An RNA of 207 nucleotides, treated with DMS and 2A3 and read out base by base.
For DMS the reverse transcriptase was MarathonRT.
It was measured as part of the RMDB library OK3TST.
Values are in units of 0.01, from 0 to 300, in steps of 10.
For 2A3, 1,447 sequencing reads were counted.
The DMS profile rests on 2,111 reads.
RNA sequence: GGGAACGACUCGAGUAGAGUCGAAAAGCUUGUUAUCAAGAACCUAAUCUGGAUGGGAAAGCAUGCAUGAUAUUAAUGGAUGUACCCAUCCGAAACGUACGUCAGCAUGCGAAAGGAUGGUGAGUGGCGUACGGAAACCAUCCCCUGUUGAGCAUGCACAUCGGGAUGGAUUCGUCCAUCCCGAUGUAAAAGAAACAACAACAACAAC
Reactivity to DMS in 0.01 (KOAc 150mM, MgCl2 10mM, bicine 150mM(pH8.5), 24C), signal-to-noise 1, nucleotides 027 to 156: g020c050u010u000g020u010u010a120u030c060a070a040g020a070a130c060c050u000a140a050u000c110u000g020g020a070u000g000g000g000a060a060a200g030c020a070u010g020c020a040u000g010a190u000a220u000u020a080a080u000g010g000a010u000g050u020a190c020c000c020a060u020c010c000g020a040a010a080c000g000u010a040c020g010u000c000a170g100c040a070u010g020c020g000a100a130a060g000g000a070u000g000g010u000g000a110g070u000g000g020c010g000u000a060c040g010g000a020a040a020c040c000a020u000c010c000c050c080u000g070u000u000g000a170g000c010a020u000g000c020
Reactivity to 2A3 in 0.01 (KOAc 150mM, MgCl2 10mM, bicine 150mM(pH8.5), 24C), signal-to-noise 3, nucleotides 027 to 156: g060c020u080u070g070u230u280a160u300c020a010a010g010a070a050c000c010u090a100a130u140c110u140g010g000a000u000g010g030g000a140a090a040g030c010a010u070g040c010a000u020g070a080u190a080u300u300a150a010u030g040g140a000u000g010u100a140c000c000c000a010u000c000c000g000a020a000a000c020g000u030a000c030g010u000c040a010g000c020a060u000g000c000g020a070a030a000g020g010a000u060g000g030u020g020a100g060u040g000g020c010g000u010a010c000g030g080a050a030a000c010c000a040u060c000c000c000c070u110g010u130u150g060a020g010c000a010u010g000c000